[RMDB]
RNA sequence: GGGAACGACUCGAGUAGAGUCGAAAACAUCUAAGGGCUUGAUAGUCUAUGAUGAAUGACACCAAGAGUUGGCUGAUGGCAACAUGAAAGGACACGUGCAAGACCUGAAAAGGUCACUUGUAGGGCACAUAAUUGUGAUCUUCGGAUCACAAUUAUGAAAAGAAACAACAACAACAAC
Reactivity to 2A3 in 0.01 (KOAc 150mM, MgCl2 10mM, bicine 150mM(pH8.5), 24C), signal-to-noise 2, nucleotides 027 to 126: c000a000u000c010u040a040a080g030g000g000c030u130u170g200a130u270a140g010u000c010u000a010u030g020a000u010g060a030a140u090g030a040c010a030c060c010a020a010g090a000g120u100u120g130g000c040u070g060a100u120g050g050c020a020a000c030a090u120g080a050a080a000g030g010a000c000a010c120g020u050g000c000a050a040g020a030c000c000u020g010a000a000a050a000g000g010u040c020a010c020u010u030g030u050a030g000g050g060c020a000
Reactivity to DMS in 0.01 (KOAc 150mM, MgCl2 10mM, bicine 150mM(pH8.5), 24C), signal-to-noise 4, nucleotides 027 to 126: c020a030u000c020u000a090a170g000g000g000c010u000u010g010a160u010a040g010u000c010u000a300u000g000a020u010g000a110a120u010g020a090c090a150c020c010a090a080g000a080g000u000u010g010g020c050u010g010a100u000g010g010c040a040a080c070a060u000g000a040a050a070g000g000a060c100a060c070g010u000g000c040a040a060g010a030c000c000u000g000a030a030a090a010g000g000u000c030a030c100u000u000g010u000a060g000g000g010c070a190